[RMDB]
Source: RMDB library M2RFPK, as collected in RNAgym. This 207-nucleotide RNA was probed chemically with DMS and 2A3. The 2A3 profile rests on 3,793 reads. For DMS the reverse transcriptase was MarathonRT.
RNA sequence: GGGAACGACUCGAGUAGAGUCGAAAAAAAGACGCGGUUGCCGAUCGGUAUGGAUGCCACCGUGACGGCUCAAUCACACAAGUGCCAACGAUAACGAGGCGCUCGCUAUUGCAGCGUAACUGACGGCUAGAUACAGCCAGGUUCGCCUGGCUGUAAAAGGAUGCUUACUAUUCGUAGUAAGCAUCCUAAAAGAAACAACAACAACAAC
Reactivity to DMS in 0.01 (KOAc 150mM, MgCl2 10mM, bicine 150mM(pH8.5), 24C), signal-to-noise 2, nucleotides 027 to 156: a080a100a120g020a100c010g010c040g030g040u000u000g000c030c000g020a170u000c040g020g000u010a080u000g020g010a080u010g020c030c030a070c000c010g040u010g000a240c070g010g000c020u000c050a050a120u000c050a070c080a140c020a100a070g020u000g060c000c010a060a170c040g010a120u000a050a130c030g020a300g000g030c070g020c000u010c040g060c050u000a080u000u010g010c030a070g010c060g020u000a030a090c070u000g010a050c020g010g000c020u000a080g020a300u010a000c030a000g040c000c000a000g020g020u000u000c260g050c000c000u000g020g010c000u000g000u000a010a020a100
Reactivity to 2A3 in 0.01 (KOAc 150mM, MgCl2 10mM, bicine 150mM(pH8.5), 24C), signal-to-noise 5, nucleotides 027 to 156: a000a000a000g120a020c060g000c030g040g010u040u020g000c010c010g050a130u030c030g010g010u140a120u160g110g040a040u100g030c010c010a030c010c010g030u030g060a080c030g010g000c000u020c040a050a100u070c010a030c010a010c010a110a070g030u020g040c010c020a110a030c090g070a080u080a180a050c090g000a050g030g000c020g010c040u030c030g010c020u100a140u180u300g000c030a010g000c010g030u040a100a040c030u020g030a020c030g020g010c030u040a020g000a100u040a030c000a000g010c010c000a010g000g020u020u030c090g070c020c000u000g000g020c000u000g010u000a000a000a000
Conditions: 150 mM KOAc, 10 mM MgCl2 and 150 mM bicine (pH 8.5), 24 C.